Record summary
An RNA of 207 nucleotides, treated with 2A3 and DMS and read out base by base.
[RMDB]
RNA sequence: GGGAACGACUCGAGUAGAGUCGAAAACUGCAACUAACUUCUAAUUAGUCCCUCUUAUUUUACAGAGGAGGAAACUGUGGCCUAUCCUGCAAAGCACUCUAGCUGAUAACUGGUAGCUCUAAGACCAGAAGUCAGGUUCUCUGACUCUCAGUCUAGGGUCAUAUGUCGGUUUCGACCGACAUAUGACAAAAGAAACAACAACAACAAC
Reactivity to 2A3 in 0.01 (KOAc 150mM, MgCl2 10mM, bicine 150mM(pH8.5), 24C), signal-to-noise 3, nucleotides 027 to 156: c050u090g040c050a020a030c030u060a030a080c040u120u010c030u200a200a220u190u090a080g000u060c020c050c000u010c010u040u190a300u120u230u030u090a120c140a030g040a010g050g010a030g050g000a030a140a020c040u050g020u040g050g020c010c010u050a070u040c020c030u020g020c050a180a000a000g050c020a020c040u030c010u020a030g020c020u000g020a050u060a170a040c000u000g030g010u050a030g050c030u000c070u190a120a050g020a060c000c010a030g010a020a000g010u000c000a000g050g130u300u110c240u040c000u030g000a010c000u000c000u010c030a020g070u040c030u030a040g060g000
Reactivity to DMS in 0.01 (KOAc 150mM, MgCl2 10mM, bicine 150mM(pH8.5), 24C), signal-to-noise 1, nucleotides 027 to 156: c050u000g020c010a110a070c020u000a050a040c030u020u010c110u020a230a080u000u020a070g010u000c070c000c000u020c040u000u000a100u010u000u000u010a120c160a090g010a110g050g000a100g020g010a120a040a070c050u000g010u020g050g030c000c010u000a160u000c020c020u010g060c120a080a070a070g000c090a030c020u020c030u000a050g040c000u000g000a130u000a020a090c020u010g050g030u000a130g010c070u010c020u000a090a120g000a090c000c030a110g010a070a100g000u000c000a000g040g010u010u000c080u000c000u000g000a030c020u000c000u000c070a020g000u000c000u000a080g000g070
DMS adducts were read by reverse transcription with MarathonRT.